[RMDB]
RNA sequence: GGGAACGACUCGAGUAGAGUCGAAAACUUCCAGCGUUCGCGCUGGAAGAAAGGCCGAGUAGUGUUGGGUCGCGAAAGGCGAUAAAUCAACAAUCACUCAGAAAAUCGGUAUCUUCGGAUACCGAAAGGUAAAUAGUAAGUUCGCUUACUAUUUACCAAAAGAAACAACAACAACAAC
Reactivity to 2A3 in 0.01 (KOAc 150mM, MgCl2 10mM, bicine 150mM(pH8.5), 24C), signal-to-noise 8, nucleotides 027 to 126: c000u010u000c000c000a000g010c010g040u060u090c170g010c000g000c070u020g000g000a000a000g000a020a010a000g070g010c040c020g000a010g000u060a000g010u020g040u070u030g050g020g010u060c010g000c010g120a300a180a010g300g000c010g000a010u040a050a240a060u110c010a010a030c010a020a080u150c040a020c020u010c020a030g140a080a100a010a100u030c010g000g000u000a000u000c000u010u050c180g080g000a000u000a000c000c010g000a000a000a000
Reactivity to DMS in 0.01 (KOAc 150mM, MgCl2 10mM, bicine 150mM(pH8.5), 24C), signal-to-noise 7, nucleotides 027 to 126: c000u000u000c000c000a010g010c000g020u000u020c210g030c010g040c000u000g000g000a000a010g000a020a070a110g010g010c040c020g010a020g020u000a090g020u000g000u000u000g000g000g010u000c010g010c000g000a110a140a130g010g000c010g010a020u000a040a100a140u010c020a020a030c040a080a110u010c110a030c010u000c010a130g000a070a060a120a110u000c000g000g000u000a000u000c000u000u010c170g020g000a010u000a000c010c000g010a010a010a040